[RMDB]
RNA sequence: GGGAACGACUCGAGUAGAGUCGAAAAGCACCUUGAAAACAAAUUAUCUGCUAGUUCAGUAUUUUCUACUUAUAAUCACUCCCUCCCAGGGCAUGUAAUUAAUUUACUGAGCUUACCAAAAACAAAAAAUGUAUGGCAAUUUCGAUUGCCAUACAUUAAAAGAAACAACAACAACAAC
Reactivity to 2A3 in 0.01 (KOAc 150mM, MgCl2 10mM, bicine 150mM(pH8.5), 24C), signal-to-noise 5, nucleotides 027 to 126: g020c020a070c040c020u080u120g140a110a060a040a020c080a070a190a060u240u110a130u160c050u060g040c020u050a020g030u020u020c010a000g030u020a040u010u040u040u030c050u030a090c030u110u130a080u050a170a080u120c060a040c070u050c000c000c000u050c030c070c070a020g010g000g000c040a030u090g010u030a020a000u070u040a040a040u030u070u030a010c010u000g000a000g020c000u030u030a020c000c010a050a020a040a060a040c120a040a080a030a120
Reactivity to DMS in 0.01 (KOAc 150mM, MgCl2 10mM, bicine 150mM(pH8.5), 24C), signal-to-noise 2, nucleotides 027 to 126: g010c060a010c060c000u020u060g020a080a080a140a120c100a080a070a180u060u040a050u010c080u000g020c050u010a030g020u000u000c020a010g000u010a040u000u000u000u010c070u010a060c030u000u000a050u000a070a010u020c050a110c030u010c090c010c030u000c080c010c010a180g000g030g030c270a060u020g000u000a030a020u000u000a100a060u000u010u000a040c010u010g000a030g000c020u010u010a120c080c130a030a050a030a100a060c150a030a010a040a020
Notes
Chemical mapping of a 177-nucleotide RNA with 2A3 and DMS. The RNA was probed in 150 mM KOAc, 10 mM MgCl2 and 150 mM bicine (pH 8.5) at 24 C. For DMS, 1,620 sequencing reads were counted. For 2A3 the reverse transcriptase was SuperScript II with manganese. It was measured as part of the RMDB library RFM100. For 2A3, 2,681 sequencing reads were counted.